[RMDB]
RNA sequence: GGGAACGACUCGAGUAGAGUCGAAAAGAAGAGAGUAGAAGAUGGCCGCCAUGGUCCUAGCCCCUCGCUGGCGCCGGCUGGGCAACACCAUUGCACUCCGGUGGCGUAUGGUUCAAGAGAGAAAGAAGCUACGUGGUAGUUUCGACUACCACGUAGCAAAAGAAACAACAACAACAAC
Reactivity to 2A3 in 0.01 (KOAc 150mM, MgCl2 10mM, bicine 150mM(pH8.5), 24C), signal-to-noise 2, nucleotides 027 to 126: g040a090a000g090a000g010a020g070u100a010g060a100a020g020a090u090g030g020c030c020g030c050c010a070u190g000g000u040c010c000u040a050g010c000c000c000c000u010c010g060c080u050g050g000c000g000c010c010g000g010c220u010g000g000g000c000a020a080c060a010c120c050a040u050u070g010c020a020c030u000c010c020g040g000u010g040g030c010g050u090a090u070g040g020u000u090c090a070a030g040a000g030a010g060a120a080a000g110a090a000
Reactivity to DMS in 0.01 (KOAc 150mM, MgCl2 10mM, bicine 150mM(pH8.5), 24C), signal-to-noise 2, nucleotides 027 to 126: g010a130a010g020a060g020a050g010u010a050g000a100a070g000a030u020g010g000c070c020g020c030c120a030u000g010g000u020c040c000u020a090g010c000c050c000c070u000c070g070c030u010g000g000c000g020c000c100g020g010c130u020g030g030g040c040a040a080c090a030c090c120a080u010u000g010c020a060c050u010c050c050g000g010u020g000g020c040g010u020a050u000g030g010u010u000c090a040a050g010a060g020a100g000a090a080a070g000a170a180